[RMDB]
Source: RMDB library OK3TST, as collected in RNAgym. An RNA of 207 nucleotides, treated with DMS and 2A3 and read out base by base.
RNA sequence: GGGAACGACUCGAGUAGAGUCGAAAAUGAUGUUGAGAUAUCAAAGGGUGAUGGAGUUGGCCGGUUGGUUUGUCCAGGGUUAUGGAGGUUGGCACUUCCCCAACAUCAUGAGAUUCAACAGUCUGUAAUGGCUCCUAACUCUGGGAAGUGUCACAGAAGAGUGUUAGGUAUUCGUACCUAACACUCUAAAAGAAACAACAACAACAAC
Reactivity to DMS in 0.01 (KOAc 150mM, MgCl2 10mM, bicine 150mM(pH8.5), 24C), signal-to-noise 3, nucleotides 027 to 156: u010g010a020u000g000u010u010g000a180g030a170u000a110u000c080a080a150a100g000g000g040u000g000a110u010g020g000a080g010u000u000g040g000c010c020g000g020u010u020g020g020u010u000u010g010u020c040c040a190g020g020g010u000u000a070u010g020g010a110g000g000u000u000g000g010c020a030c020u010u000c010c010c010c040a040a070c070a050u000c020a060u000g010a140g000a150u000u010c030a050a090c080a090g010u000c030u020g020u000a090a120u020g010g020c010u010c010c020u000a100a050c070u010c040u010g040g020g000a010a030g040u000g010u000c000a020c060a080g000a160
Reactivity to 2A3 in 0.01 (KOAc 150mM, MgCl2 10mM, bicine 150mM(pH8.5), 24C), signal-to-noise 4, nucleotides 027 to 156: u050g050a010u030g000u040u010g040a060g030a090u160a020u250c110a060a060a050g040g000g030u050g020a040u180g010g030a030g030u040u080g050g090c040c070g040g050u040u020g030g050u020u040u040g050u000c030c050a040g050g000g030u080u060a080u090g110g000a050g060g020u080u040g030g000c020a000c010u020u000c000c000c010c000a010a000c010a010u050c000a010u040g030a000g030a100u080u110c060a080a070c010a120g090u020c010u040g060u060a110a150u150g040g000c000u020c010c010u030a060a070c000u030c030u040g000g000g000a000a000g010u000g030u010c010a020c000a010g180a120

Notes
Conditions: 150 mM KOAc, 10 mM MgCl2 and 150 mM bicine (pH 8.5), 24 C. For 2A3 the reverse transcriptase was SuperScript II with manganese. For 2A3, 1,926 sequencing reads were counted. The DMS profile rests on 5,971 reads.